Chemical mapping of a 177-nucleotide RNA with DMS and 2A3.
RNA sequence: GGGAACGACUCGAGUAGAGUCGAAAACGCGCAGACAUCACCGCUGAUCGUCGCCGUACGCGUGCCGACCGGCAAGGACGCGGACGCAACGACCAGCAACGUGAUCGGCACGACAACCGCGGACGGCGGCUUUAGCCCUAUUCGUAGGGCUAAAGCCAAAAGAAACAACAACAACAAC
Reactivity to DMS in 0.01 (KOAc 150mM, MgCl2 10mM, bicine 150mM(pH8.5), 24C), signal-to-noise 2, nucleotides 027 to 126: c030g030c030g020c030a040g000a110c200a050u000c020a000c040c250g010c030u010g000a030u000c010g000u050c050g000c190c020g000u010a020c000g010c000g010u000g000c030c000g020a130c130c030g020g000c090a110a070g000g000a040c020g000c000g030g020a010c060g020c030a050a010c020g010a010c020c000a030g010c010a070a000c200g000u000g000a050u000c020g000g020c000a000c030g000a100c100a080a040c020c030g030c050g030g000a060c100g000g000c150
Reactivity to 2A3 in 0.01 (KOAc 150mM, MgCl2 10mM, bicine 150mM(pH8.5), 24C), signal-to-noise 1, nucleotides 027 to 126: c060g030c000g010c010a040g030a150c040a000u030c020a020c070c030g000c030u020g000a030u020c010g000u000c020g020c110c060g030u050a030c040g020c010g010u100g300c000c000g050a140c060c060g090g040c060a070a070g060g010a020c000g000c000g020g020a020c000g000c040a020a020c010g040a020c030c000a020g020c030a040a060c060g000u020g010a070u010c010g000g000c050a000c060g060a020c050a100a040c020c050g020c050g070g060a050c010g110g040c060
About this RNA:
For 2A3, 1,927 sequencing reads were counted. Conditions: 150 mM KOAc, 10 mM MgCl2 and 150 mM bicine (pH 8.5), 24 C. It was measured as part of the RMDB library OK2TRN.